An RNA of 177 nucleotides, treated with 2A3 and DMS and read out base by base. The data come from the RNA Mapping Database (RMDB), library VIROID. For DMS, 2,594 sequencing reads were counted. Reactivities are given for positions 27 through 126.

[RMDB]
RNA sequence: GGGAACGACUCGAGUAGAGUCGAAAAUUUUGAGAGUAGUGAUGACCUCUCAGCCCCUCCACCUUGGGGUGCCCUAUCCGAGCACUGCUGUUUCGGUAGAAAGGCUAAGCACGUCGCAAUGACGUAACUCUUCAUAUGUCUUCGGACAUAUGAAGAGAAAAGAAACAACAACAACAAC
Reactivity to 2A3 in 0.01 (KOAc 150mM, MgCl2 10mM, bicine 150mM(pH8.5), 24C), signal-to-noise 5, nucleotides 027 to 126: u070u030u020u010g010a000g000a000g000u120a020g070u040g220a160u100g080a120c010c010u010c010u000c000a000g000c000c020c000c000u050c040c060a210c020c020u050u080g000g000g010g020u010g020c000c000c000u000a020u000c010c000g000a010g010c000a080c220u300g140c120u080g140u110u300u050c010g000g000u000a010g010a010a020a000g010g000c010u030a040a010g080c100a010c010g010u000c010g010c150a180a280u290g000a000c000g010u020a010a040
Reactivity to DMS in 0.01 (KOAc 150mM, MgCl2 10mM, bicine 150mM(pH8.5), 24C), signal-to-noise 3, nucleotides 027 to 126: u010u000u000u010g000a000g010a020g020u000a070g010u000g020a120u020g000a120c200c010u010c000u000c010a040g000c000c000c000c000u010c140c130a150c190c120u000u000g000g000g000g020u000g020c010c000c010u000a090u010c010c030g000a030g010c020a050c260u000g010c190u010g010u000u000u000c000g000g000u000a060g000a060a090a130g010g000c010u000a030a150g020c130a030c010g010u000c000g010c160a120a060u010g010a020c000g010u000a070a170
DMS adducts were read by reverse transcription with MarathonRT.